[RMDB]
RNA sequence: GGGAACGACUCGAGUAGAGUCGAAAACGCAGUAUUGCAUUCCUCUGUACGUUAGCUAUCAUGGUUAACAGCCUAGCGACCGAGCCUUUGCAGCGUGCUUCGGGUUCCCUGAUCAGGAGAAGGACGCUCCUGAUUAUGAUUUCGAUCAUAAUCAGGAAAAAGAAACAACAACAACAAC
Reactivity to DMS in 0.01 (KOAc 150mM, MgCl2 10mM, bicine 150mM(pH8.5), 24C), signal-to-noise 9, nucleotides 027 to 126: c170g010c030a060g010u020a070u020u010g020c030a170u010u000c040c010u000c140u010g010u000a070c120g010u010u000a040g010c010u000a060u010c180a090u020g010g010u000u000a060a060c080a130g010c070c040u000a050g000c040g000a080c070c040g000a070g000c050c030u000u010u010g010c070a070g010c050g010u000g000c030u000u000c040g010g010g000u000u000c010c000c000u010g010a100u010c150a100g000g000a080g010a050a060g000g010a070c090g010c080
Reactivity to 2A3 in 0.01 (KOAc 150mM, MgCl2 10mM, bicine 150mM(pH8.5), 24C), signal-to-noise 9, nucleotides 027 to 126: c070g000c020a030g060u210a120u190u190g020c020a030u050u040c010c000u030c040u050g060u060a090c050g020u030u040a020g010c010u040a040u290c060a140u230g080g040u120u080a080a050c030a050g000c000c010u020a010g010c000g020a010c010c020g020a010g030c010c040u090u080u110g030c040a030g010c010g050u040g070c010u030u040c020g070g020g000u020u020c010c000c000u050g050a140u100c060a030g050g020a050g020a050a020g060g010a010c030g010c030
The record gives the reactivity of an RNA of 177 nucleotides to DMS and 2A3.